[RMDB]
RNA sequence: GGGAACGACUCGAGUAGAGUCGAAAAGAUAUGGAACGUAUGGCCAGCGACGAUCUGGCAGUCGGAAACGACUGUCCAGGGAGCUGGUACGUUCCUAAGUCAAAAGUCCUCUCUUCGGAGAGGACAAUCGGAAUCUAUGGUUCGCCAUAGAUUCCGAAAAAGAAACAACAACAACAAC
Reactivity to DMS in 0.01 (KOAc 150mM, MgCl2 10mM, bicine 150mM(pH8.5), 24C), signal-to-noise 1, nucleotides 027 to 126: g010a000u000a090u010g020g000a050a020c010g010u010a050u030g050g020c160c020a010g030c020g040a120c300g000a020u040c030u000g000g000c000a000g030u000c010g020g000a020a030a040c000g030a000c000u000g000u010c010c010a050g010g010g010a010g030c010u010g000g020u000a000c020g020u000u000c000c020u000a010a050g000u020c030a080a120a130a270g000u000c010c000u000c000u000c000u000u010c300g020g010a010g000a000g010g000a000c010a000a020
Reactivity to 2A3 in 0.01 (KOAc 150mM, MgCl2 10mM, bicine 150mM(pH8.5), 24C), signal-to-noise 1, nucleotides 027 to 126: g030a000u030a010u100g000g000a010a000c000g030u030a100u300g300g210c100c020a030g030c040g300a300c030g010a170u010c000u000g020g010c000a010g000u040c020g000g020a030a000a050c010g000a000c010u000g070u060c000c000a010g000g000g030a020g000c010u000g020g000u000a000c010g010u010u000c010c000u000a060a000g020u020c000a000a000a160a110g010u060c000c000u020c000u030c000u030u130c300g170g020a000g000a020g000g000a000c000a000a030

About this RNA:
Structure probing data (DMS and 2A3) for a 177-nucleotide construct. The 2A3 profile rests on 2,171 reads. Source: RMDB library TTRDES, as collected in RNAgym. Conditions: 150 mM KOAc, 10 mM MgCl2 and 150 mM bicine (pH 8.5), 24 C. The DMS profile rests on 1,218 reads. Reactivities are given for positions 27 through 126. For 2A3 the reverse transcriptase was SuperScript II with manganese.